[RMDB]
RNA sequence: GGGAACGACUCGAGUAGAGUCGAAAAGAUAUGGAUCGUAUAGGGAGAAUGUCGGAAACGAUAAAUUCGAAGAACUAUGACGAUCCUAAGUCAAAGCGAUUAAAAAGCUUCGGCUUUUUAAUCGCAAGAGUAUGAGAUUCUUCGGAAUCUCAUACUCAAAAGAAACAACAACAACAAC
Reactivity to DMS in 0.01 (KOAc 150mM, MgCl2 10mM, bicine 150mM(pH8.5), 24C), signal-to-noise 2, nucleotides 027 to 126: g020a020u000a300u010g000g010a010u000c010g000u000a030u010a010g020g000g010a100g020a020a040u010g000u000c000g020g010a130a110a170c040g020a030u000a060a070a130u000u010c000g000a090a160g000a110a090c010u000a010u000g000a040c000g010a010u000c010c000u000a040a140g000u010c040a090a100a160g000c000g000a000u000u000a000a000a020a000a020g010c000u000u020c250g020g010c000u000u010u000u000u000a000a000u000c000g000c000a000a010
Reactivity to 2A3 in 0.01 (KOAc 150mM, MgCl2 10mM, bicine 150mM(pH8.5), 24C), signal-to-noise 1, nucleotides 027 to 126: g020a030u070a010u260g000g010a000u020c010g010u040a000u020a040g060g010g000a040g030a000a000u020g040u020c030g020g040a050a010a090c010g020a020u050a170a300a030u030u010c030g050a130a080g010a070a020c000u020a000u130g220a060c020g000a000u000c000c000u000a070a000g010u000c010a090a110a000g000c000g000a000u000u000a010a020a040a000a000g000c040u010u060c300g070g000c000u090u110u000u000u000a010a000u010c010g010c000a030a000